The record gives the reactivity of an RNA of 177 nucleotides to DMS and 2A3. The RNA was probed in 150 mM KOAc, 10 mM MgCl2 and 150 mM bicine (pH 8.5) at 24 C. The data come from the RNA Mapping Database (RMDB), library OK2TST. For DMS the reverse transcriptase was MarathonRT. 2A3 adducts were read by reverse transcription with SuperScript II with manganese. The DMS profile rests on 2,579 reads.
RNA sequence: GGGAACGACUCGAGUAGAGUCGAAAAUGAAAUACCGCAUGCCAUCAUGUUCGACACGACGAAUUAUAUAGCGAUCCACACGGAGUGGUGCGCCCGUUGUGGGGUCACGGACCCAGUGAUCGUCCUCGGGUAGUAUUUACUUCGGUAAAUACUACCCAAAAGAAACAACAACAACAAC
Reactivity to DMS in 0.01 (KOAc 150mM, MgCl2 10mM, bicine 150mM(pH8.5), 24C), signal-to-noise 3, nucleotides 027 to 126: u000g000a090a100a090u000a100c060c020g000c080a070u010g010c060c040a040u020c050a050u000g010u010u000c030g010a100c090a070c110g000a070c060g010a110a070u020u020a100u010a110u000a110g010c020g000a080u010c010c000a050c020a070c100g010g000a100g020u000g000g010u000g030c060g020c160c030c030g000u010u010g010u000g010g020g000g010u000c010a070c090g010g000a100c040c010c000a150g030u000g010a060u010c040g000u000c020c040u000c270
Reactivity to 2A3 in 0.01 (KOAc 150mM, MgCl2 10mM, bicine 150mM(pH8.5), 24C), signal-to-noise 1, nucleotides 027 to 126: u060g030a000a030a040u110a040c010c010g000c030a020u060g040c040c030a060u090c010a050u120g080u010u060c080g050a020c020a030c130g130a010c010g020a060a030u300u000a100u030a010u080a090g040c020g020a050u040c030c000a030c000a010c040g070g030a130g000u050g060g070u070g050c010g020c000c000c000g050u120u110g020u090g040g020g010g000u030c020a000c180g070g010a060c030c010c020a020g000u020g030a070u030c010g020u060c020c020u030c080